[RMDB]
RNA sequence: GGGAACGACUCGAGUAGAGUCGAAAACGUGGGAUUUUAUCACUACCACGGCUCCUAGUGAUAAAAUCGGAGCAGCCUUAUGUGUACGGUGGACAUGCGAAAGCAUGUCCAUCGUACGCAUAAGGCAGCAGCAUGUAGGGUUCGCCCUACAUGCUGCAAAAGAAACAACAACAACAAC
Reactivity to DMS in 0.01 (KOAc 150mM, MgCl2 10mM, bicine 150mM(pH8.5), 24C), signal-to-noise 2, nucleotides 027 to 126: c080g030u000g010g020g000a020u010u000u000u000a010u000c010a020c010u010a060c110c090a120c090g000g010c030u000c020c070u000a020g010u010g020a010u000a000a010a030a030u000c020g010g020a160g000c110a160g010c000c000u000u020a010u000g010u000g000u000a000c010g010g030u000g000g000a010c000a010u010g000c000g000a130a090a170g000c010a000u000g010u010c000c000a000u000c000g010u010a000c000g000c000a000u000a000a000g010g020c000a000